[RMDB]
Source information: The data come from the RNA Mapping Database (RMDB), library 15KLIB. An RNA of 170 nucleotides, treated with 2A3 and DMS and read out base by base. DMS adducts were read by reverse transcription with MarathonRT. High 2A3 reactivity points to a flexible backbone, as in loops and unpaired stretches.
RNA sequence: GGGAACGACUCGAGUAGAGUCGAAAAGAUUUAAGUGAAUAGCUUGGCUAUCUCACUUCCCCUCGUUCUCUUGCAGAACUUUGAUUUUAACGAACUUAAAUAAAAGCCCUGUUGUUUAGCGUAUCGUCGAGCUGUUAGUUCGCUAACAGCAAAAGAAACAACAACAACAAC
Reactivity to 2A3 in 0.01 (KOAc 150mM, MgCl2 10mM, bicine 150mM(pH8.5), 24C), signal-to-noise 5, nucleotides 027 to 129: g160a050u140u190u170a040a010g000u000g000a000a010u010a010g000c080u120u180g130g000c000u020a020u020c130u000c070a000c000u070u120c000c000c000c000u040c030g040u030u000c020u020c000u020u070g040c110a030g010a070a050c000u090u060u080g140a130u090u050u010u110a080a010c080g020a050a040c100u090u100a050a060a040u160a010a000a050a000g020c000c000c010u020g040u030u000g000u000u030u030a050g010c040g060u060a080u120c100g090u000c030g040a000
Reactivity to DMS in 0.01 (KOAc 150mM, MgCl2 10mM, bicine 150mM(pH8.5), 24C), signal-to-noise 3, nucleotides 027 to 129: g000a100u000u000u000a000a000g040u000g040a000a000u020a050g020c000u030u040g090g010c000u030a000u020c180u010c000a050c020u000u000c000c000c000c000u030c040g020u050u010c020u040c050u070u050g010c100a100g000a120a070c060u070u020u020g000a140u000u000u000u000a000a010c150g020a060a240c090u050u020a010a010a020u040a040a020a020a020g050c030c020c020u040g040u130u000g000u010u060u010a050g020c280g020u020a050u020c040g010u010c080g000a270